[RMDB]
RNA sequence: GGGAACGACUCGAGUAGAGUCGAAAAUCAAACCCGCCCUUGUAGCUCAGUCGUAGAGCGCUUCACUCGUAUUCCAAUACUGCCAUGAAGAGGUCCGCGGUUCAAUCCCGCGUGGUGGCAAAAAAAACCUAUGAUGUAGGUUCGCCUACAUCAUAGGAAAAGAAACAACAACAACAAC
Reactivity to 2A3 in 0.01 (KOAc 150mM, MgCl2 10mM, bicine 150mM(pH8.5), 24C), signal-to-noise 2, nucleotides 027 to 126: u120c010a040a030a090c010c000c000g040c010c010c000u060u070g110u110a040g010c000u000c050a040g060u080c060g060u120a030g000a030g080c030g010c000u040u040c030a080c030u020c020g030u040a140u080u010c020c000a050a060u050a190c050u030g000c000c010a030u070g020a110a110g020a030g110g040u020c030c020g000c000g020g000u050u070c030a030a040u030c000c030c000g020c000g000u020g000g010u010g000g000c000a020a030a010a020a000a010a030a030
Reactivity to DMS in 0.01 (KOAc 150mM, MgCl2 10mM, bicine 150mM(pH8.5), 24C), signal-to-noise 3, nucleotides 027 to 126: u020c080a080a100a150c030c010c020g000c030c010c030u000u000g010u000a100g010c020u000c020a050g010u000c080g010u010a120g000a040g020c040g000c030u010u010c030a210c020u000c030g020u000a110u000u000c030c030a090a090u010a060c150u000g000c040c020a010u000g020a060a090g010a080g010g010u020c090c020g020c000g000g010u000u010c200a080a200u010c300c000c000g010c010g030u010g010g020u000g010g010c020a000a000a010a040a060a040a080a130